[RMDB]
RNA sequence: GGGAACGACUCGAGUAGAGUCGAAAAUGAAUUGUCUUUUACUAAUUACAAGCUCCAGUCUCAGAUUGUAACUGGCCUUUUUAAAGAUUGCUCUAGAGAAACUUCUGGCCUCUCACCUGCUUAUGCACAAUAGUCUAAUCUUCGGAUUAGACUAUUGAAAAGAAACAACAACAACAAC
Reactivity to 2A3 in 0.01 (KOAc 150mM, MgCl2 10mM, bicine 150mM(pH8.5), 24C), signal-to-noise 3, nucleotides 027 to 126: u080g030a010a080u080u010g020u040c040u040u090u040u070a090c040u080a070a120u090u090a070c020a100a010g030c020u050c040c020a040g070u000c050u010c030a080g020a300u080u130g030u090a060a020c010u010g030g000c000c010u120u110u060u060u090a080a100a030g020a050u030u130g020c000u040c040u080a080g000a020g010a160a120a020c000u060u060c010u040g070g000c020c000u030c000u030c010a030c010c010u020g020c000u140u060a020u180g020c020a010
Reactivity to DMS in 0.01 (KOAc 150mM, MgCl2 10mM, bicine 150mM(pH8.5), 24C), signal-to-noise 4, nucleotides 027 to 126: u000g010a090a090u000u000g000u000c030u000u000u000u010a110c080u000a080a080u000u000a070c090a050a090g010c070u000c040c050a050g000u000c050u010c060a090g000a100u000u000g000u000a050a040c070u000g020g010c200c020u000u000u000u020u010a030a080a110g000a070u000u000g010c040u010c030u000a080g010a100g010a090a070a060c080u000u000c040u000g000g010c050c020u000c030u010c040a060c080c020u010g020c050u000u010a050u000g000c100a140